[RMDB]
RNA sequence: GGGAACGACUCGAGUAGAGUCGAAAAAGUCGUCAGGAUACGUCCUGACGACAGUCGAUCAAACGUCUGACGAACCUCCAGUACCUGAUACGGCUGGAGGCAAGCGGAGUGGUACGCCACUCCGCAAUUACCUACCGCUCUUCGGAGCGGUAGGUAAAAAAGAAACAACAACAACAAC
Reactivity to DMS in 0.01 (KOAc 150mM, MgCl2 10mM, bicine 150mM(pH8.5), 24C), signal-to-noise 1, nucleotides 027 to 126: a050g070u010c000g050u000c000a000g000g000a030u000a140c070g020u000c000c000u000g000a000c010g000a000c000a040g000u040c120g000a060u000c010a200a160a120c220g000u000c090u000g020a020c140g070a200a250c000c110u000c000c000a050g000u000a030c000c000u000g000a190u010a120c300g000g000c000u000g020g000a000g000g000c100a020a090g000c000g040g030a000g000u000g000g000u050a020c180g020c010c000a000c000u010c000c000g000c000a020a000
Reactivity to 2A3 in 0.01 (KOAc 150mM, MgCl2 10mM, bicine 150mM(pH8.5), 24C), signal-to-noise 2, nucleotides 027 to 126: a000g020u020c020g020u000c000a000g030g010a000u010a130c200g030u030c000c000u010g060a000c020g000a000c000a000g000u010c000g030a070u090c050a140a050a050c070g070u070c160u130g050a100c080g060a010a080c010c000u000c000c010a010g020u010a060c010c010u030g000a090u040a250c020g000g000c000u000g010g010a000g000g000c010a070a000g000c000g000g000a040g000u000g010g000u020a050c260g070c060c000a000c000u000c010c020g000c020a000a010
An RNA of 177 nucleotides, treated with DMS and 2A3 and read out base by base. For 2A3 the reverse transcriptase was SuperScript II with manganese. Conditions: 150 mM KOAc, 10 mM MgCl2 and 150 mM bicine (pH 8.5), 24 C. It was measured as part of the RMDB library RFM100. For DMS the reverse transcriptase was MarathonRT. For DMS, 1,608 sequencing reads were counted.